[RMDB]
RNA sequence: GGGAACGACUCGAGUAGAGUCGAAAAACACAAGUCAACGUAGGAUGUUCAUUGUAUCAGUCUACGUUUCAUAGCGUGGAUCUUUUAACUGAAAAUAAUGAUAAGAGUUAAAAUCAACACUAACCUAUAGGAAUGGAAAGUUCGCUUUCCAUUCCUAAAAAGAAACAACAACAACAAC
Reactivity to 2A3 in 0.01 (KOAc 150mM, MgCl2 10mM, bicine 150mM(pH8.5), 24C), signal-to-noise 2, nucleotides 027 to 126: a000c080a020c030a180a050g140u150c030a040a000c030g000u010a040g030g020a030u060g030u070u040c090a180u140u300g060u140a010u040c010a000g030u000c020u010a000c000g040u040u070u080c150a090u100a010g040c080g020u050g030g020a060u030c060u050u140u020u040a000a010c000u040g040a020a030a120a110u220a090a170u130g070a050u110a230a080g050a040g050u000u020a010a020a010a040u130c010a030a000c000a000c080u130a050a030c000c000u070a050
Reactivity to DMS in 0.01 (KOAc 150mM, MgCl2 10mM, bicine 150mM(pH8.5), 24C), signal-to-noise 1, nucleotides 027 to 126: a060c160a070c170a130a070g000u040c200a010a060c000g000u000a000g030g010a030u000g010u000u000c020a170u010u000g000u020a000u000c020a010g000u000c010u000a000c000g000u000u000u020c150a090u010a060g000c040g010u000g020g010a050u010c100u010u030u000u000a000a000c020u010g000a050a090a170a160u020a050a090u000g000a120u000a110a180g000a040g000u000u000a000a000a040a030u000c020a050a030c040a000c030u000a060a050c090c060u000a090

The record gives the reactivity of an RNA of 177 nucleotides to 2A3 and DMS. Values cover nucleotides 27 to 126. For 2A3 the reverse transcriptase was SuperScript II with manganese. The reactions ran in a buffer of 150 mM KOAc, 10 mM MgCl2 and 150 mM bicine (pH 8.5), at 24 C. Source: RMDB library OK2TST, as collected in RNAgym. Values are in units of 0.01, from 0 to 300, in steps of 10.